[RMDB]
RNA sequence: GGGAACGACUCGAGUAGAGUCGAAAAGGUGCCAGCACCCGCGGUAAUACCAGCUCCUGGAGUGUCUAUGAUGAUUGCUGCAGUUAAAGAGUUCGUAGUCGAAGUGGUUAUAACGGCGUAACAGGCCCAUAAUUAAGUCUUUCGAGACUUAAUUAUGAAAAGAAACAACAACAACAAC
Reactivity to DMS in 0.01 (KOAc 150mM, MgCl2 10mM, bicine 150mM(pH8.5), 24C), signal-to-noise 9, nucleotides 027 to 126: g010g020u010g010c030c020a080g010c060a090c050c020c030g010c070g010g010u010a080a080u020a220c050c040a090g010c040u000c020c020u000g010g000a070g020u010g010u000c020u010a090u020g010a100u020g010a060u010u020g010c020u010g010c020a040g000u010u020a040a060a070g010a070g010u010u010c150g010u010a070g010u010c030g010a070a110g010u010g000g010u000u010a080u020a080a090c110g000g010c020g010u010a060a080c150a110g010g010c020c040
Reactivity to 2A3 in 0.01 (KOAc 150mM, MgCl2 10mM, bicine 150mM(pH8.5), 24C), signal-to-noise 9, nucleotides 027 to 126: g060g010u050g030c010c010a020g020c040a040c010c010c020g020c020g010g020u080a080a050u060a140c020c020a020g010c010u010c010c010u020g010g050a030g020u060g020u000c020u050a130u150g090a070u090g010a040u110u170g010c010u030g010c010a030g020u100u130a110a080a020g060a010g010u020u040c030g020u050a030g030u030c010g010a070a020g040u060g050g030u060u010a060u030a130a030c030g010g000c010g020u020a060a020c010a060g090g070c000c000

Structure probing data (DMS and 2A3) for a 177-nucleotide construct. The reactions ran in a buffer of 150 mM KOAc, 10 mM MgCl2 and 150 mM bicine (pH 8.5), at 24 C. DMS adducts were read by reverse transcription with MarathonRT.